[RMDB]
RNA sequence: GGGAACGACUCGAGUAGAGUCGAAAAUAGCGAAGUAGGAUUUUAUGCGUCAAGUGUUCACAGGCUGGGGAGUCGACGUGAAACGAAAAGCAGAAAGCGUGCUGCUUACGAUAUAAUUUCCGCACCCAUAAGAAGUCUCUGUUCGCAGAGACUUCAACCCUUCUAUUAAGUUCGCUUAAUAGAAGGGAAAAGAAACAACAACAACAAC
Reactivity to DMS in 0.01 (KOAc 150mM, MgCl2 10mM, bicine 150mM(pH8.5), 24C), signal-to-noise 3, nucleotides 027 to 156: u000a090g020c050g010a080a110g020u010a140g040g000a060u000u000u000u000a030u010g010c060g000u020c080a050a180g000u000g030u000u000c020a030c040a160g010g010c030u020g010g000g020g020a130g020u000c000g010a040c060g020u000g020a030a030a080c040g000a230a040a030a030g020c010a040g000a070a050a130g010c140g000u000g020c000u000g010c010u000u000a050c050g000a140u010a050u010a050a100u000u010u000c020c000g020c060a080c010c010c010a160u010a050a080g000a030a030g000u000c000u000c000u000g020u000u000c300g040c010a010g010a020g000a020c000u000u000c010a030a050
Reactivity to 2A3 in 0.01 (KOAc 150mM, MgCl2 10mM, bicine 150mM(pH8.5), 24C), signal-to-noise 9, nucleotides 027 to 156: u150a020g040c040g050a080a020g070u100a070g030g020a020u030u030u030u040a040u090g020c020g010u030c060a070a050g040u050g030u260u030c020a020c020a050g030g030c030u050g020g000g060g040a030g060u020c010g020a050c060g010u020g020a030a010a020c020g020a050a030a030a010g000c010a010g050a070a140a010g130c110g070u130g040c010u000g000c010u030u010a020c020g020a010u010a010u010a150a040u020u020u010c010c010g000c030a040c000c020c000a030u080a110a080g010a000a000g000u000c000u000c000u000g040u050u040c140g010c060a000g000a000g000a000c000u000u000c000a000a000

Conditions: 150 mM KOAc, 10 mM MgCl2 and 150 mM bicine (pH 8.5), 24 C.
The record gives the reactivity of an RNA of 207 nucleotides to DMS and 2A3.
The DMS profile rests on 7,114 reads.
The data come from the RNA Mapping Database (RMDB), library M2RFPK.
For 2A3, 16,272 sequencing reads were counted.